[RMDB]
RNA sequence: GGGAACGACUCGAGUAGAGUCGAAAAUAAGUCAGCAGGUGGAAACACUUUGUGCGUGGGUUAGGUAGCCUCAUAUACAUGAACGACUGAUGUAGAGUUCGGUUGGGGAGAUAAGUAUCUAAUGCGUGUAAAAAACGUAGUUCGCUACGUUUUUUACAAAAGAAACAACAACAACAAC
Reactivity to 2A3 in 0.01 (KOAc 150mM, MgCl2 10mM, bicine 150mM(pH8.5), 24C), signal-to-noise 2, nucleotides 027 to 126: u090a030a020g050u000c010a010g010c010a010g080g020u030g040g010a030a030a050c030a020c000u120u230u100g050u050g000c070g020u020g010g030g050u060u050a030g000g050u010a000g050c020c010u000c020a020u120a000u030a130c050a050u090g020a060a010c020g140a050c030u060g030a050u110g080u130a060g020a000g100u040u020c020g020g000u050u040g000g000g000g050a060g020a030u100a070a040g030u040a030u020c030u070a040a030u130g090c030g040u060
Reactivity to DMS in 0.01 (KOAc 150mM, MgCl2 10mM, bicine 150mM(pH8.5), 24C), signal-to-noise 3, nucleotides 027 to 126: u000a100a120g000u000c070a130g000c050a040g000g030u000g010g010a180a110a160c070a020c040u000u010u000g020u000g020c080g010u000g010g000g030u000u000a020g010g010u000a090g000c030c030u000c050a060u010a110u000a080c050a080u030g010a070a070c050g020a120c040u000g020a080u000g020u000a060g000a140g010u000u000c030g020g010u010u000g010g000g000g010a130g010a080u020a050a150g020u010a020u020c090u000a040a050u020g020c130g000u000
Structure probing data (2A3 and DMS) for a 177-nucleotide construct. For DMS the reverse transcriptase was MarathonRT. For 2A3, 1,738 sequencing reads were counted. The RNA was probed in 150 mM KOAc, 10 mM MgCl2 and 150 mM bicine (pH 8.5) at 24 C.